[RMDB]
RNA sequence: GGGAACGACUCGAGUAGAGUCGAAAACGCUGACCUUCGCGACGUUCCCCAGCGGGGACCUCGACGUCGUGAACCUCAAUUUCCCACCGCAGUCGUUCGCGCAGGUUCUGGUCGGUUGGCAGAAUUGAUAGAGACAUUUGUUCGCAAAUGUCUCUAUAAAAGAAACAACAACAACAAC
Reactivity to DMS in 0.01 (KOAc 150mM, MgCl2 10mM, bicine 150mM(pH8.5), 24C), signal-to-noise 5, nucleotides 027 to 126: c150g000c040u000g020a050c060c170u000u000c040g000c000g000a030c000g000u000u020c020c000c010c040a130g020c190g010g020g000g010a300c140c050u030c180g000a030c030g010u010c010g010u010g020a030a040c060c190u010c090a100a080u010u000u010c010c000c000a140c140c060g020c110a060g020u000c020g000u010u000c030g000c060g000c100a070g010g010u000u010c030u010g010g020u020c060g010g010u000u010g000g010c040a060g000a120a070u020u020g000
Reactivity to 2A3 in 0.01 (KOAc 150mM, MgCl2 10mM, bicine 150mM(pH8.5), 24C), signal-to-noise 7, nucleotides 027 to 126: c080g000c040u030g030a060c000c020u030u020c010g010c010g020a010c010g010u080u120c000c000c010c000a080g180c180g040g020g000g020a030c010c090u120c120g030a010c020g010u010c000g010u020g020a020a020c010c020u080c020a080a150u030u030u030c000c000c000a010c030c040g040c050a020g020u050c020g020u040u050c060g010c010g010c150a050g060g000u080u010c020u070g050g040u100c050g020g010u050u080g030g000c050a010g060a090a110u150u130g020